[RMDB]
RNA sequence: GGGAACGACUCGAGUAGAGUCGAAAAGAAGUGGCAGGGACAUGCCCCAAAAGCUCGUUCUAGCAACAUAUGUUUGGCUAGUUCGAGCGAUUAGUCUAGAGGAGCGUCCUCUCGCCUAUUCACGAGAAAUACCCAUUUAUUUCGAUAAAUGGGUAUUAAAAGAAACAACAACAACAAC
Reactivity to DMS in 0.01 (KOAc 150mM, MgCl2 10mM, bicine 150mM(pH8.5), 24C), signal-to-noise 9, nucleotides 027 to 126: g000a050a030g010u000g000g030c020a080g000g000g010a020c040a110u030g000c020c020c010c030a030a080a090a170g010c010u000c000g010u000u000c000u000a000g000c010a040a020c040a200u040a100u060g010u020u010u020g020g010c000u000a000g010u010u000c000g010a020g010c000g000a000u030u020a080g010u030c160u030a090g010a260g010g010a130g010c050g010u000c010c010u010c020u010c130g010c030c000u000a170u000u000c020a160c120g000a110g010a080
Reactivity to 2A3 in 0.01 (KOAc 150mM, MgCl2 10mM, bicine 150mM(pH8.5), 24C), signal-to-noise 9, nucleotides 027 to 126: g030a020a010g040u030g020g000c000a010g010g010g000a010c040a060u230g020c000c000c000c020a020a070a010a020g000c000u000c000g000u000u000c000u000a000g010c010a010a060c020a080u300a070u300g140u110u090u110g160g020c000u000a000g010u000u000c000g000a000g000c000g000a000u010u060a030g070u030c110u110a040g020a150g080g020a120g030c020g010u010c000c010u070c020u030c060g000c000c000u020a100u020u040c050a050c080g090a070g100a080